The data come from the RNA Mapping Database (RMDB), library M2PK50. This 177-nucleotide RNA was probed chemically with 2A3 and DMS.

RNA sequence: GGGAACGACUCGAGUAGAGUCGAAAAGAACAUCAGUUCGCUGAUGUUCAAAGGCCGAGUAGUGUUGGGUCGCGAAUGGCCAUACAUAAACAUUCACUCAGAAAACAACGUCCUUCGGGACGUUGAACAGAAUGUAACACUUCGGUGUUACAUUCUGAAAAGAAACAACAACAACAAC
Reactivity to 2A3 in 0.01 (KOAc 150mM, MgCl2 10mM, bicine 150mM(pH8.5), 24C), signal-to-noise 1, nucleotides 027 to 126: g010a000a000c000a010u010c000a000g010u060u050c120g000c110u010g010a000u000g000u000u010c010a000a040a010g050g020c040c040g010a010g010u030a010g000u020g040u080u090g140g040g060u090c030g020c090g250a170a140u260g010g000c010c000a010u070a020c030a060u180a010a110a000c010a030u040u100c050a020c030u020c030a020g120a080a080a030a030c010a000a000c000g000u010c020c000u040u050c150g080g020g000a000c000g000u000u010g000a000a000
Reactivity to DMS in 0.01 (KOAc 150mM, MgCl2 10mM, bicine 150mM(pH8.5), 24C), signal-to-noise 4, nucleotides 027 to 126: g000a020a010c000a010u000c000a000g020u000u010c240g010c010u000g000a000u000g010u000u000c000a030a080a110g010g010c040c020g000a020g020u000a020g030u010g010u010u010g010g000g020u000c020g010c170g030a080a120u010g010g000c000c010a060u000a080c230a130u000a130a020a020c030a040u000u010c160a010c010u000c030a130g000a050a080a070a190c010a000a000c000g000u000c010c010u000u010c150g010g000g000a000c000g020u000u000g000a060a170
For 2A3, 5,163 sequencing reads were counted.